[RMDB]
RNA sequence: GGGAACGACUCGAGUAGAGUCGAAAAGGGGUCAUAACUAGUACCUAGCCUACCCACCAUAGGCUGCGUUCCUAUAUGAACUACUCCUGAAGCCUCCACGGGAGCAUAUAGGAACGCAGCCUAUGAGGGCUAGGGACCGUUAUGACGGAGGCACCCACUUUUACGUUGUGUUCGCACAACGUAAAAGAAAAGAAACAACAACAACAAC
Reactivity to DMS in 0.01 (KOAc 150mM, MgCl2 10mM, bicine 150mM(pH8.5), 24C), signal-to-noise 1, nucleotides 027 to 156: g000g070g000g000u000c020a030u020a000a030c010u000a100g040u000a050c000c000u000a030g020c010c000u000a010c000c010c040a300c070c000a040u000a000g020g020c000u000g000c000g000u000u000c000c020u000a020u010a010u000g020a190a100c250u020a300c000u020c000c000u000g020a110a070g010c030c000u050c000c060a300c020g040g000g000a070g050c030a010u000a010u000a000g030g000a000a000c050g010c010a000g030c000c000u000a000u000g000a140g100g000g030c010u010a030g000g000g000a000c020c130g020u000u000a000u000g000a000c010g020g010a000g000g000c010a120c000c000c000a200

The data come from the RNA Mapping Database (RMDB), library RNAMAK. The record gives the reactivity of an RNA of 207 nucleotides to DMS. For DMS the reverse transcriptase was MarathonRT. For DMS, 1,709 sequencing reads were counted. The RNA was probed in 150 mM KOAc, 10 mM MgCl2 and 150 mM bicine (pH 8.5) at 24 C.